[RMDB]
RNA sequence: GGGAACGACUCGAGUAGAGUCGAAAAAGCACAUCCGGAUCGGGAUCGCCGAUGAUCGGGAUCUUACGGCGCUGCUCCUUGGUGAGGAUGAAGUCGGCCAGCAGGUCAGCGUCCGAUUUGCCUUCCCACGCCCCAUGGGCAUCCUGAGCGCGGAUGAGACAGUAGUUCUAUUCGUAGAACUACUGUCAAAAGAAACAACAACAACAAC
Reactivity to 2A3 in 0.01 (KOAc 150mM, MgCl2 10mM, bicine 150mM(pH8.5), 24C), signal-to-noise 5, nucleotides 027 to 156: a010g170c100a070c000a020u010c000c000g000g020a020u020c010g000g000g010a010u020c100g000c020c020g120a030u020g020a050u140c130g000g000g000a010u020c010u030u040a030c020g020g000c010g010c010u010g000c050u080c020c010u030u040g030g020u090g120a200g130g040a110u190g160a110a050g090u070c040g050g000c020c010a060g140c110a010g040g030u020c000a000g000c010g090u110c040c030g200a300u000u010u060g030c000c020u050u040c000c010c000a020c080g070c010c030c000c010a010u040g040g000g000c000a000u000c000c000u010g000a010g010c260g020c010g020g010a000u010g000a000
Reactivity to DMS in 0.01 (KOAc 150mM, MgCl2 10mM, bicine 150mM(pH8.5), 24C), signal-to-noise 1, nucleotides 027 to 156: a090g000c060a110c030a010u010c020c030g000g030a060u000c020g030g010g010a040u010c050g060c000c010g000a090u000g020a140u000c020g010g030g000a040u000c020u010u010a100c070g020g000c010g040c040u010g020c030u000c020c020u000u020g010g030u010g000a170g020g000a120u000g000a100a080g020u000c050g030g010c030c010a150g000c110a120g010g000u010c050a130g000c020g020u000c030c060g000a140u010u000u000g010c110c020u000u020c010c010c010a130c080g020c020c060c050c030a120u000g010g000g020c010a030u010c050c000u020g000a050g030c050g000c030g000g020a010u000g000a200